[RMDB]
Chemical mapping of a 177-nucleotide RNA with DMS and 2A3.
For DMS the reverse transcriptase was MarathonRT.
For 2A3 the reverse transcriptase was SuperScript II with manganese.
RNA sequence: GGGAACGACUCGAGUAGAGUCGAAAACGACAUAUUUGUAUCAUGACUUUGAUUUUGCAACGGAAGUGAUUGAUACUUUAGUUGAUGAAGAUAAAGGUUGUCCAUGGGAUAAAGUGCAAACGCAUGACCCUUGUCACAAGUUCGCUUGUGACAAGGGAAAAGAAACAACAACAACAAC
Reactivity to DMS in 0.01 (KOAc 150mM, MgCl2 10mM, bicine 150mM(pH8.5), 24C), signal-to-noise 1, nucleotides 027 to 126: c010g030a200c050a140u000a030u040u010u000g040u000a000u030c020a020u000g030a040c000u060u000u000g000a050u010u040u020u010g010c060a110a080c120g000g010a030a000g040u000g010a080u000u000g020a000u030a010c000u000u010u000a170g050u000u000g010a060u010g000a050a030g070a010u040a060a090a130g000g000u010u030g060u010c000c080a060u000g000g000g020a070u060a040a010a060g000u060g010c050a010a030a030c110g040c110a050u000g000a260
Reactivity to 2A3 in 0.01 (KOAc 150mM, MgCl2 10mM, bicine 150mM(pH8.5), 24C), signal-to-noise 2, nucleotides 027 to 126: c060g090a000c060a040u290a030u040u100u080g030u020a000u030c000a010u000g010a030c020u050u000u000g190a210u060u080u100u300g050c030a090a040c040g110g020a010a000g010u050g100a120u030u090g060a000u000a050c000u000u000u040a070g020u020u060g060a080u090g030a060a100g010a060u180a100a250a000g080g060u000u010g030u040c030c020a030u130g020g000g130a040u020a130a160a070g010u040g010c000a050a150a080c150g010c110a060u050g060a050

The reactions ran in a buffer of 150 mM KOAc, 10 mM MgCl2 and 150 mM bicine (pH 8.5), at 24 C. The DMS profile rests on 1,783 reads.